[RMDB]
Notes
The data come from the RNA Mapping Database (RMDB), library TTRDEL. Structure probing data (2A3 and DMS) for a 177-nucleotide construct. 2A3 adducts were read by reverse transcription with SuperScript II with manganese.
RNA sequence: GGGAACGACUCGAGUAGAGUCGAAAAGAUAUGGAUCUUGCGAUAAGCUCCAUUCGGAAACGAAUGAGAGCUUUUGACGCAAAUCCUAAGUCAAAGAUUGCUGCGUCGUUCGCGACGCAGCAAUCAAGACUACUAUAGGGUUCGCCCUAUAGUAGUCAAAAGAAACAACAACAACAAC
Reactivity to 2A3 in 0.01 (KOAc 150mM, MgCl2 10mM, bicine 150mM(pH8.5), 24C), signal-to-noise 2, nucleotides 027 to 126: g020a020u060a020u120g000g000a030u050c210u160u000g000c010g050a060u010a170a050g000c000u000c010c000a010u010u010c000g030g040a180a030a040c000g000a000a020u160g060a300g010a010g300c020u020u010u000u040g020a010c000g000c000a000a020a010u000c000c000u020a110a020g030u030c050a060a030a200g000a020u000u010g010c030u010g010c030g060u010c060g060u060u130c300g010c030g150a010c000g000c020a000g000c000a020a000u000c000a010a010
Reactivity to DMS in 0.01 (KOAc 150mM, MgCl2 10mM, bicine 150mM(pH8.5), 24C), signal-to-noise 3, nucleotides 027 to 126: g010a050u000a250u010g000g000a000u000c160u000u000g010c000g010a160u000a020a020g010c000u010c000c000a020u000u010c000g010g000a090a060a120c010g010a020a010u010g000a110g010a000g000c000u000u000u000u000g000a190c030g010c000a010a010a010u000c000c000u000a030a130g000u000c010a080a140a120g010a010u000u000g010c030u000g000c000g030u000c000g030u010u010c190g010c000g030a020c000g050c000a010g000c010a000a000u000c000a040a110

For 2A3, 4,271 sequencing reads were counted.